Description:
The record gives the reactivity of an RNA of 177 nucleotides to 2A3 and DMS. Values cover nucleotides 27 to 126. The data come from the RNA Mapping Database (RMDB), library M2PK50. The RNA was probed in 150 mM KOAc, 10 mM MgCl2 and 150 mM bicine (pH 8.5) at 24 C.
RNA sequence: GGGAACGACUCGAGUAGAGUCGAAAACAGCCAGGGUUCGCCCUGGCUGAAAUAAACCGAGCAUAUAAAAGGAAAUAUAACCAAGCUCGGAAAAGACGAAAAAAAGGGAUACGUUCGCGUAUCCCAACCUUAAUCAGCAGUUCGCUGCUGAUUAAGGAAAAGAAACAACAACAACAAC
Reactivity to 2A3 in 0.01 (KOAc 150mM, MgCl2 10mM, bicine 150mM(pH8.5), 24C), signal-to-noise 1, nucleotides 027 to 126: c040a010g030c000c000a000g010g000g040u040u060c090g110c000c020c010u000g010g000c000u000g000a000a000a010u070a010a010a010c030c000g000a000g000c000a030u180a000u130a190a130a080a030g000g000a110a250a030u300a050u020a140a020c020c010a000a060g000c000u010c000g000g040a000a010a010a000g040a040c070g110a050a080a000a030a000a000a240g000g000g020a010u000a020c000g000u000u040c180g000c000g140u000a000u000c000c000c000a000a000
Reactivity to DMS in 0.01 (KOAc 150mM, MgCl2 10mM, bicine 150mM(pH8.5), 24C), signal-to-noise 1, nucleotides 027 to 126: c020a040g000c000c010a000g030g000g030u000u000c160g000c000c010c000u000g000g000c000u020g000a000a060a020u000a070a100a160c000c020g000a000g010c000a090u010a140u020a070a060a050a170g030g000a080a060a100u000a060u030a060a050c010c010a080a110g020c000u010c000g000g000a060a050a060a160g000a090c180g010a000a000a030a040a110a150a090g000g010g010a010u000a000c000g000u000u000c300g010c000g020u000a000u000c000c000c000a040a020